[RMDB]
RNA sequence: GGGAACGACUCGAGUAGAGUCGAAAAAUUUACGACUCUCAAGCGAAGCGAGUGCUAGCAUGCUCGAUAGCACUAAACAAAACAGGAAACUGAAAAUCGAGCAAUCGCAAGAGUCGUUCCCAUACAAAACAGUAAAAGUAUUCGUACUUUUACUGUUAAAAGAAACAACAACAACAAC
Reactivity to DMS in 0.01 (KOAc 150mM, MgCl2 10mM, bicine 150mM(pH8.5), 24C), signal-to-noise 3, nucleotides 027 to 126: a110u000u000u000a130c010g020a000c000u000c010u000c060a160a150g020c030g010a080a140g020c040g000a070g000u000g000c020u000a100g010c060a270u010g000c010u000c030g010a070u000a020g000c030a040c040u000a070a080a090c120a060a080a100a150c000a010g000g000a080a110a200c010u000g000a060a070a100a060u000c060g010a020g010c010a050a110u010c020g000c010a100a110g000a020g000u000c000g000u000u000c000c000c000a010u000a030c200a040a070
Reactivity to 2A3 in 0.01 (KOAc 150mM, MgCl2 10mM, bicine 150mM(pH8.5), 24C), signal-to-noise 2, nucleotides 027 to 126: a000u120u130u100a060c000g000a000c020u000c000u000c050a070a030g040c000g040a050a010g000c040g060a060g110u080g050c010u010a000g050c030a030u070g010c000u030c030g010a010u010a010g060c020a000c040u070a020a070a050c080a020a070a000a020c020a020g090g000a050a080a020c010u020g050a150a080a020a070u030c010g000a000g040c000a020a070u070c010g010c020a070a010g000a000g000u000c000g000u000u010c000c000c000a000u010a000c000a000a090
Background: The record gives the reactivity of an RNA of 177 nucleotides to DMS and 2A3. The 2A3 profile rests on 2,658 reads. Reactivities are given for positions 27 through 126. 2A3 adducts were read by reverse transcription with SuperScript II with manganese. For DMS, 2,793 sequencing reads were counted.